[RMDB]
RNA sequence: GGGAACGACUCGAGUAGAGUCGAAAAGGGAAACCGAUAACUUACGGCUGGUUCUAACUGGAACUGAGGACAGCGGAAUUGUCUACGAUCAGGCUGGUAAACACGACUAAGUGGAACAGAUAAUCCAACUGUGCAGGUCGUUCGCGACUUGCACAGUAAAAGAAACAACAACAACAAC
Reactivity to DMS in 0.01 (KOAc 150mM, MgCl2 10mM, bicine 150mM(pH8.5), 24C), signal-to-noise 4, nucleotides 027 to 126: g010g020g000a050a080a110c080c010g000a120u030a040a100c000u000u000a060c040g000g000c030u000g000g010u010u000c020u000a050a080c070u020g010g000a060a100c180u000g000a080g020g010a070c050a050g000c050g000g010a030a080u010u000g000u010c050u010a090c110g020a080u000c060a090g000g000c040u010g000g000u020a100a070a060c050a060c040g000a120c060u010a030a040g010u000g000g000a030a060c090a030g000a060u020a090a120u000c040c010a070
Reactivity to 2A3 in 0.01 (KOAc 150mM, MgCl2 10mM, bicine 150mM(pH8.5), 24C), signal-to-noise 4, nucleotides 027 to 126: g020g000g000a020a000a020c000c000g000a000u020a030a060c000u000u050a030c000g010g000c020u020g010g080u020u010c000u010a060a150c040u040g050g010a030a040c010u030g030a040g010g050a030c000a010g020c010g050g050a100a070u100u040g040u000c020u050a040c040g010a020u030c010a010g100g000c000u000g010g020u040a030a110a030c030a010c070g040a040c070u030a040a060g020u040g020g010a030a020c020a040g030a070u080a060a010u110c020c000a000
This 177-nucleotide RNA was probed chemically with DMS and 2A3. For 2A3 the reverse transcriptase was SuperScript II with manganese. The RNA was probed in 150 mM KOAc, 10 mM MgCl2 and 150 mM bicine (pH 8.5) at 24 C. The 2A3 profile rests on 8,708 reads. Reactivities are given for positions 27 through 126. The data come from the RNA Mapping Database (RMDB), library OK1LIB.